[RMDB]
RNA sequence: GGGAACGACUCGAGUAGAGUCGAAAAAUCAAUUGAAGCUGGUAUAGAUAAUGUAGGACUAACGACAUUGCGUAAGACAUUUGCAUAUCAUGCUUAUCAAAAAGGUAUACCUAUACCAGUCAUUCAAACCGCCCACAUGAUUCGUCAUGUGGGCGGUAAAAGAAACAACAACAACAAC
Reactivity to 2A3 in 0.01 (KOAc 150mM, MgCl2 10mM, bicine 150mM(pH8.5), 24C), signal-to-noise 1, nucleotides 027 to 126: a010u040c060a000a010u000u000g000a000a000g000c000u000g010g020u000a000u000a000g050a140u070a130a190u250g000u000a070g170g020a040c020u050a050a010c010g050a060c130a130u000u130g080c000g160u020a000a000g000a120c050a150u000u060u270g100c000a030u050a060u080c110a060u170g000c000u020u060a000u040c070a090a070a000a000a000g050g000u100a030u030a090c020c000u020a000u000a000c070c000a000g000u000c020a000u000u010c000a050a080